This 177-nucleotide RNA was probed chemically with DMS and 2A3.
For DMS, 1,600 sequencing reads were counted.
As a SHAPE reagent, 2A3 marks flexible, mostly unpaired nucleotides at the ribose 2'-OH.
The reactions ran in a buffer of 150 mM KOAc, 10 mM MgCl2 and 150 mM bicine (pH 8.5), at 24 C.
For 2A3, 1,230 sequencing reads were counted.
RNA sequence: GGGAACGACUCGAGUAGAGUCGAAAAAAGAUGAGACAGACUAUCUUCGGCCGGGAGGAGUUCGUGAGACUCAUGAAAGCCCUCGAGUGGACGGACAUCACUUUCACCGAGCAAGUGAUGGCCUACCAUCCUCGUACACCUUCGGGUGUACGAGGAUAAAAGAAACAACAACAACAAC
Reactivity to DMS in 0.01 (KOAc 150mM, MgCl2 10mM, bicine 150mM(pH8.5), 24C), signal-to-noise 1, nucleotides 027 to 126: a050a040g010a060u000g000a040g000a060c000a120g020a040c120u000a070u000c030u030u000c000g000g010c040c000g030g000g000a030g000g030a080g000u040u000c140g000u080g000a220g040a070c060u030c000a030u000g000a130a050a070g000c130c070c040u000c000g010a080g040u030g000g000a140c210g000g000a000c060a000u030c000a000c000u000u000u000c020a120c140c080g000a040g000c090a020a010g120u000g000a020u000g000g030c000c000u010a220c030c010
Reactivity to 2A3 in 0.01 (KOAc 150mM, MgCl2 10mM, bicine 150mM(pH8.5), 24C), signal-to-noise 2, nucleotides 027 to 126: a000a000g160a020u120g030a030g030a020c030a020g070a010c010u050a150u170c090u060u030c060g100g010c010c050g010g020g000a010g020g040a010g000u090u120c020g000u040g060a140g010a050c000u010c020a050u160g070a060a060a060g030c000c000c000u040c030g000a030g010u050g060g000a010c020g000g000a000c000a000u010c000a000c000u050u040u030c100a090c070c110g050a070g100c060a060a000g000u000g000a020u000g010g000c000c000u010a010c000c000